[RMDB]
RNA sequence: GGGAACGACUCGAGUAGAGUCGAAAAAUUUGCUGGGGUUAUACUGGAAGGGACAUGGAUCUAUCCAAAGAACAAUGAAUGAUGGUGUACUGAUAGAGCAUAAUCUUAAUCUUUCCAUCAAUGAAGCCCAUCCACAGUUUUUCGAAACUGUGGAUGGAAAAGAAACAACAACAACAAC
Reactivity to 2A3 in 0.01 (KOAc 150mM, MgCl2 10mM, bicine 150mM(pH8.5), 24C), signal-to-noise 1, nucleotides 027 to 126: a000u150u120u130g060c000u020g010g000g020g020u130u050a020u030a100c030u030g010g080a040a000g000g020g010a010c010a010u050g020g010a010u000c060u100a050u060c050c000a020a070a050g100a020a030c060a060a070u180g060a090a080u060g050a040u040g000g070u080g020u080a030c050u030g000a030u020a040g020a000g050c120a030u100a220a090u060c030u040u090a000a070u020c000u050u120u030c020c010a030u040c030a020a060u080g040a060a020g080c030
Reactivity to DMS in 0.01 (KOAc 150mM, MgCl2 10mM, bicine 150mM(pH8.5), 24C), signal-to-noise 2, nucleotides 027 to 126: a100u010u000u010g020c060u010g000g010g040g020u000u000a110u000a070c060u010g000g000a080a110g000g010g010a040c080a040u010g000g000a070u000c090u000a070u010c000c070a060a130a080g000a110a100c160a060a050u010g020a110a100u020g000a040u000g020g000u000g000u000a020c080u010g000a160u000a110g000a040g010c130a100u000a060a130u000c030u000u000a090a070u010c020u000u000u000c000c010a030u000c090a060a130u010g000a110a110g000c230